[RMDB]
RNA sequence: GGGAACGACUCGAGUAGAGUCGAAAAGGGCGCAAGCUUAAGGUAUAGUCCACUCCCACUUCGAAAGAGGUGCUAUAAAGCUAUUAAGAAGUUUGCUUACUUCCUAGGGUUUUAUAGAUCCGUUGCUUGUAUACAAUAUACGUGUAUACAUCAAUACGUGAUUAUAAUUCUUCGGAAUUAUAAUCACAAAAGAAACAACAACAACAAC
Reactivity to DMS in 0.01 (KOAc 150mM, MgCl2 10mM, bicine 150mM(pH8.5), 24C), signal-to-noise 2, nucleotides 027 to 156: g000g010g000c000g050c140a090a200g000c040u000u020a080a100g030g030u010a120u000a110g000u000c020c030a200c080u000c010c000c010a100c050u000u000c040g010a070a130a160g000a080g030g000u000g020c010u000a000u000a010a010a050g020c020u000a040u020u000a130a040g000a040a030g000u000u030u000g000c170u010u010a100c030u000u000c000c000u000a190g000g010g010u000u000u000u000a040u010a060g000a060u010c060c070g000u000u000g000c010u000u010g030u000a010u000a000c000a060a110u000a140u000a070c150g010u000g030u000a020u000a020c010a110u000c070a050a120u000a120c200
Reactivity to 2A3 in 0.01 (KOAc 150mM, MgCl2 10mM, bicine 150mM(pH8.5), 24C), signal-to-noise 5, nucleotides 027 to 156: g030g010g000c060g020c130a100a050g020c060u170u220a080a050g070g010u110a120u100a110g020u010c020c000a040c050u030c000c000c020a010c050u130u150c050g110a100a070a030g100a040g040g000u080g050c010u000a000u000a020a000a000g000c000u000a010u270u010a190a010g000a010a000g010u040u150u190g090c020u100u100a010c000u000u010c000c000u000a010g040g000g000u000u000u000u020a000u000a000g010a030u030c020c020g060u040u040g050c090u010u010g000u000a000u010a000c020a070a030u130a040u060a300c130g040u030g000u040a000u000a000c010a010u020c020a010a040u060a120c130